An RNA of 177 nucleotides, treated with DMS and 2A3 and read out base by base.
RNA sequence: GGGAACGACUCGAGUAGAGUCGAAAACUGCCAAAAACUGCGGGCCUCUACCCACCCUUAAUAGCAACCCAUGUGUCACCCUGUUGGCACCUUAAGUCAUUGUAAAAGGCAACCUGGUCAGUUGCUCGGGAUACAGUAGAUUCGUCUACUGUAUCCCAAAAGAAACAACAACAACAAC
Reactivity to DMS in 0.01 (KOAc 150mM, MgCl2 10mM, bicine 150mM(pH8.5), 24C), signal-to-noise 3, nucleotides 027 to 126: c090u010g010c030c030a050a090a060a100a110c120u010g000c080g020g000g020c050c030u010c040u000a100c040c010c030a090c060c030c040u000u000a060a060u010a130g000c060a070a080c060c020c040a080u020g010u010g010u000c000a050c030c190c080u000g010u010u000g010g000c030a020c020c130u000u000a080a060g000u000c080a050u010u010g010u010a030a060a060a110g010g010c010a010a030c030c010u000g010g000u000c110a300g000u000u000g010c010u010c180
Reactivity to 2A3 in 0.01 (KOAc 150mM, MgCl2 10mM, bicine 150mM(pH8.5), 24C), signal-to-noise 2, nucleotides 027 to 126: c030u090g040c010c000a090a050a050a020a020c100u140g000c050g000g040g020c000c010u060c020u070a090c000c000c010a040c040c020c010u060u090a060a060u050a090g010c010a010a080c010c000c030a060u070g020u000g020u010c010a020c010c100c090u060g030u220u020g050g000c000a030c000c010u090u130a030a040g040u050c040a060u070u180g150u110a100a060a070a020g040g000c010a010a010c010c000u040g000g020u010c010a000g000u000u000g000c000u030c050
It was measured as part of the RMDB library OK2TST. For 2A3, 2,345 sequencing reads were counted. Values cover nucleotides 27 to 126.